[RMDB]
RNA sequence: GGGAACGACUCGAGUAGAGUCGAAAAACGGUGUCGCUGGGCAUACGAGCUACACAAGGGAGGAAACUGAAGCGCGCACGGUUUCCUUUGAUCUUGUGGUCAGCUCGUGUAUGCCUGUGCUGAAGCGCGCACGGCAACCGAAAGGUGCGUACGUCUGCGUUUUAGCAGAGUUCGCUCUGCUAAAACGAAAAGAAACAACAACAACAAC
Reactivity to 2A3 in 0.01 (KOAc 150mM, MgCl2 10mM, bicine 150mM(pH8.5), 24C), signal-to-noise 1, nucleotides 027 to 156: a000c040g010g010u050g020u040c000g000c010u030g000g000g000c000a000u010a000c000g000a010g000c010u050a030c000a000c000a010a000g000g000g000a010g010g000a000a000a000c010u040g030a250a040g040c020g000c000g000c000a010c000g000g000u030u000u000c000c000u260u120u000g000a000u010c000u000u000g010u020g020g080u080c220a000g000c010u000c000g010u000g020u000a000u000g000c000c000u010g000u010g000c000u010g040a160a030g000c010g000c000g000c020a040c030g000g020c000a010a010c000c000g050a060a030a030g030g000u040g000c040g080u200a030c010g020u030c030u050g010
Reactivity to DMS in 0.01 (KOAc 150mM, MgCl2 10mM, bicine 150mM(pH8.5), 24C), signal-to-noise 1, nucleotides 027 to 156: a100c030g020g020u010g050u010c010g020c010u010g010g020g000c030a010u000a050c000g000a020g030c000u020a200c010a010c010a000a050g030g010g010a010g020g000a040a000a040c000u020g020a050a050g030c010g060c000g020c000a300c050g030g000u000u010u010c000c000u000u000u020g020a040u000c010u000u010g020u000g070g010u000c130a060g030c010u000c010g020u000g030u010a030u000g030c010c000u000g020u000g040c020u000g010a060a070g000c030g030c040g010c020a300c060g000g030c010a040a100c010c030g020a090a100a160g000g030u000g000c030g000u020a090c020g010u000c030u010g020
Annotation:
Chemical mapping of a 207-nucleotide RNA with 2A3 and DMS. Conditions: 150 mM KOAc, 10 mM MgCl2 and 150 mM bicine (pH 8.5), 24 C.